[RMDB]
RNA sequence: GGGAACGACUCGAGUAGAGUCGAAAAGAGACCCGCACUUCUAGUUGCCAGCAAUACCCUUGAGGUAGUUGGGUACACUAGGAGGACUGCCGCUGCUAAAGCGGAGGAAGGAACGGGCAACGGUAGGCGAAACUUGCUCAUUCGUGAGCAAGUUUCGAAAAGAAACAACAACAACAAC
Reactivity to 2A3 in 0.01 (KOAc 150mM, MgCl2 10mM, bicine 150mM(pH8.5), 24C), signal-to-noise 2, nucleotides 027 to 126: g070a000g040a050c000c000c000g000c000a070c000u010u000c000u000a000g000u000u020g000c000c000a000g000c000a010a000u000a000c000c000c010u150u300g050a140g130g000u020a010g000u000u000g030g000g000u020a030c030a000c120u000a000g000g000a000g010g000a000c050u110g020c010c000g030c000u010g000c040u230a210a060a040g000c040g000g000a000g000g030a030a030g050g000a030a060c020g000g000g000c030a050a020c030g090g080u110a090g050g020
Reactivity to DMS in 0.01 (KOAc 150mM, MgCl2 10mM, bicine 150mM(pH8.5), 24C), signal-to-noise 1, nucleotides 027 to 126: g020a080g000a230c010c010c000g010c150a090c000u000u000c000u000a020g020u000u000g000c000c000a030g040c010a010a120u000a010c000c000c050u120u040g000a090g000g040u000a020g000u000u000g000g000g110u000a000c150a000c000u000a000g000g000a000g000g000a000c000u000g040c000c010g040c000u000g000c090u130a030a140a000g000c020g020g010a000g000g000a020a000g000g000a110a300c030g000g010g020c030a160a060c000g000g000u030a060g000g000